[RMDB]
RNA sequence: GGGAACGACUCGAGUAGAGUCGAAAAGCAGUAUCUCGUUAGGCGAGGCUCCGAUACAAACACAGGUUGCUGAUCUGACGACGUCGAGAGACGCCCAAGAUUAGGACAGGAUAUAUCGAACCAAGGUGAACCUGUCCAGGGUUCGCCCUGGACAGAACCUUACUCUGAGGUUCGCCUCAGAGUAAGGAAAAGAAACAACAACAACAAC
Reactivity to DMS in 0.01 (KOAc 150mM, MgCl2 10mM, bicine 150mM(pH8.5), 24C), signal-to-noise 2, nucleotides 027 to 156: g010c080a120g010u010a070u000c020u000c030g020u020u010a100g010g030c080g030a080g040g000c030u000c010c000g020a060u000a050c010a110a090a140c110a150c130a110g000g000u000u010g000c010u010g000a020u000c020u000g000a220c080g000a010c000g000u000c000g010a300g000a300g020a020c000g030c010c060c150a200a060g000a050u000u000a020g030g000a070c050a130g000g010a190u000a100u000a070u000c020g000a010a070c020c010a140a120g010g050u000g010a090a110c020c000u000g010u010c010c020a050g010g000g000u000u000c300g030c020c000c000u000g010g000a010c000a040g010a010a050
Reactivity to 2A3 in 0.01 (KOAc 150mM, MgCl2 10mM, bicine 150mM(pH8.5), 24C), signal-to-noise 4, nucleotides 027 to 156: g050c060a020g030u100a180u090c030u010c020g070u110u220a160g060g070c020g000a010g020g000c000u030c010c020g000a010u060a050c080a000a220a020c070a000c020a110g230g000u070u160g150c010u030g000a010u000c010u030g020a030c020g010a030c000g000u020c010g010a030g000a010g000a110c000g030c000c010c000a010a010g010a010u000u020a000g010g010a000c030a030g030g060a020u060a000u010a010u200c050g030a050a030c030c020a020a040g080g000u110g040a070a070c020c010u010g000u000c000c010a020g010g000g010u040u060c090g060c040c000c000u000g000g000a010c000a000g010a010a000

Notes
This 207-nucleotide RNA was probed chemically with DMS and 2A3. The reactions ran in a buffer of 150 mM KOAc, 10 mM MgCl2 and 150 mM bicine (pH 8.5), at 24 C.